[RMDB]
RNA sequence: GGGAACGACUCGAGUAGAGUCGAAAAUGAAGUAUGGUUGCUGUGAUGUUACCUACUUUGAAAAUAAACUCUGGUUUGAUUUUGUUGAAAAUCCCAGUGUUAUUGGUGUUUAUCAUAAACUUGGAGACGAGAAUGCUGUUCGCAGCAUUCAAAAGAAACAACAACAACAAC
Reactivity to DMS in 0.01 (KOAc 150mM, MgCl2 10mM, bicine 150mM(pH8.5), 24C), signal-to-noise 3, nucleotides 027 to 129: u070g020a010a000g030u030a030u070g050g010u020u020g050c020u040g050u060g020a110u060g030u040u030a020c030c020u020a050c000u000u000u000g020a020a020a020a020u000a080a090a100c070u000c000u040g050g000u000u020u020g000a080u060u030u030u000g030u000u000g040a030a040a050a050u030c030c010c000a030g000u000g030u010u010a060u000u000g010g040u000g030u030u040u070a090u070c000a050u040a040a070a050c090u030u060g000g000a080g030a090c130g030a200
Reactivity to 2A3 in 0.01 (KOAc 150mM, MgCl2 10mM, bicine 150mM(pH8.5), 24C), signal-to-noise 6, nucleotides 027 to 129: u220g030a040a000g000u050a020u300g000g000u020u040g000c000u030g070u120g210a100u140g030u020u040a020c000c020u000a020c020u000u010u040g150a020a010a000a000u200a040a090a010c020u020c000u040g050g090u110u100u060g050a040u040u030u040u130g250u050u190g080a040a020a000a010u020c000c010c000a000g000u020g060u060u020a080u070u120g070g030u050g080u100u140u170a070u040c050a050u050a110a040a050c010u050u070g060g000a090g020a010c080g030a020

Annotation:
Chemical mapping of a 170-nucleotide RNA with DMS and 2A3. The RNA was probed in 150 mM KOAc, 10 mM MgCl2 and 150 mM bicine (pH 8.5) at 24 C. The 2A3 profile rests on 5,176 reads.